[RMDB]
RNA sequence: GGGAACGACUCGAGUAGAGUCGAAAAGCGUACUACACCGAUAACUCCUUGGACCAAUAUUGUCAGGGAUCCCAAAUAGGAUCCCUUGGAUUUAUAUUGCUAGGAGGAAGCGGUGUAUCGCAAAACCGUGGAAAUUUGUUCGCAAAUUUCCACGGAACCUAAUAAGGUACUUCGGUACCUUAUUAGGAAAAGAAACAACAACAACAAC
Reactivity to 2A3 in 0.01 (KOAc 150mM, MgCl2 10mM, bicine 150mM(pH8.5), 24C), signal-to-noise 2, nucleotides 027 to 156: g010c010g030u080a090c060u010a000c020a000c000c000g010a010u030a110a040c010u020c010c000u060u160g070g040a080c070c030a000a000u000a010u000u010g030u020c000a010g000g010g000a000u000c040c010c030a150a270a150u260a090g000g000a000u020c000c000c000u000u090g000g000a000u000u230u000a010u010a000u000u010g010c000u010a010g010g000a020g010g060a060a040g000c000g010g010u000g000u000a000u010c000g000c000a060a070a010a050c000c000g000u000g010g010a030a000a000u040u000u010g040u040u100c150g000c160a000a010a010u000u000u000c000c000a000c000g000g000a000a000
Reactivity to DMS in 0.01 (KOAc 150mM, MgCl2 10mM, bicine 150mM(pH8.5), 24C), signal-to-noise 2, nucleotides 027 to 156: g020c000g050u000a010c110u000a010c000a000c010c020g010a050u010a120a300c020u000c000c020u000u010g070g000a120c190c000a050a020u000a010u000u010g000u000c000a090g010g000g040a000u000c000c020c000a060a160a200u020a070g010g000a000u010c000c000c000u000u000g010g010a030u000u000u000a030u000a020u010u000g020c000u010a050g020g020a060g020g020a130a190g010c010g010g010u000g020u000a000u000c030g010c000a110a100a100a130c010c000g040u000g000g010a020a020a020u000u000u000g010u000u010c300g060c030a030a010a040u000u010u000c010c000a000c020g000g020a010a030